An RNA of 177 nucleotides, treated with DMS and read out base by base.
DMS adducts were read by reverse transcription with MarathonRT.
[RMDB]
RNA sequence: GGGAACGACUCGAGUAGAGUCGAAAAGUUGCCCGAGAAGAGAUCACACACAUGAGACACAAGGAGCGAUGUCUCAUCACUUGGUUUUCGACAAGUGACGAGUCGUUCCCAAAAUCGCUCCAAUGAAGAUCUAAUGCUGUUUCGACAGCAUUAGAUCAAAAGAAACAACAACAACAAC
Reactivity to DMS in 0.01 (KOAc 150mM, MgCl2 10mM, bicine 150mM(pH8.5), 24C), signal-to-noise 2, nucleotides 027 to 126: g000u000u010g020c220c010c010g000a090g000a090a100g000a130g030a100u000c160a070c090a090c080a120c180a050u000g030a030g000a020c000a010c150a080a070g000g000a010g020c030g000a060u000g000u000c000u000c000a000u000c060a120c070u000u000g030g000u000u030u000u000c030g010a050c000a060a150g010u000g000a080c010g000a000g000u000c000g020u010u000c000c000c000a000a010a030a010u010c020g010c000u000c010c030a150a120u010g010a120a090